This 207-nucleotide RNA was probed chemically with DMS and 2A3. For 2A3 the reverse transcriptase was SuperScript II with manganese.
RNA sequence: GGGAACGACUCGAGUAGAGUCGAAAAAUGCGCCUGCACGGAAACCAUCUGCGCUGGCCGUCUGGAUUGCUCUUUAUGAGCAGGAUAAAAGCGAUCAACGCGAGCAGGCUGAAGCAAUGAGUCGUGCAGCAGAAGAGUACCUCUUUUCUGUUGCACACCUUUCACCAUUAUUCGUAAUGGUGAAAGGAAAAGAAACAACAACAACAAC
Reactivity to DMS in 0.01 (KOAc 150mM, MgCl2 10mM, bicine 150mM(pH8.5), 24C), signal-to-noise 2, nucleotides 027 to 156: a070u000g010c060g050c010c030u000g090c030a270c100g000g000a140a040a300c060c090a090u000c050u030g040c000g060c000u000g010g010c000c020g010u020c010u010g000g020a290u000u000g030c000u000c000u010u000u010a180u000g010a060g010c000a010g020g010a210u000a010a070a110a080g000c000g020a000u000c030a070a020c000g030c020g000a130g020c030a060g000g000c010u030g000a060a110g010c060a120a060u000g000a300g020u000c050g000u010g050c000a010g000c000a010g000a030a010g010a030g000u000a190c290c180u030c010u000u000u000u000c000u000g000u000u000g000c000a010c000a020
Reactivity to 2A3 in 0.01 (KOAc 150mM, MgCl2 10mM, bicine 150mM(pH8.5), 24C), signal-to-noise 5, nucleotides 027 to 156: a000u070g020c060g000c010c010u020g000c070a060c130g120g060a100a130a100c040c010a130u090c070u190g010c010g000c010u010g000g010c020c010g040u070c020u020g060g060a140u090u080g010c010u020c030u080u280u120a190u300g000a000g000c010a010g000g020a050u100a200a090a010a010g010c030g010a020u040c030a020a060c030g010c020g030a010g010c020a010g040g000c030u050g070a070a020g050c080a020a170u130g020a050g140u190c060g000u030g000c010a000g000c000a000g000a000a000g010a000g070u160a160c020c080u100c000u040u010u010u010c000u000g020u000u000g000c000a000c000a010
Notes:
DMS adducts were read by reverse transcription with MarathonRT.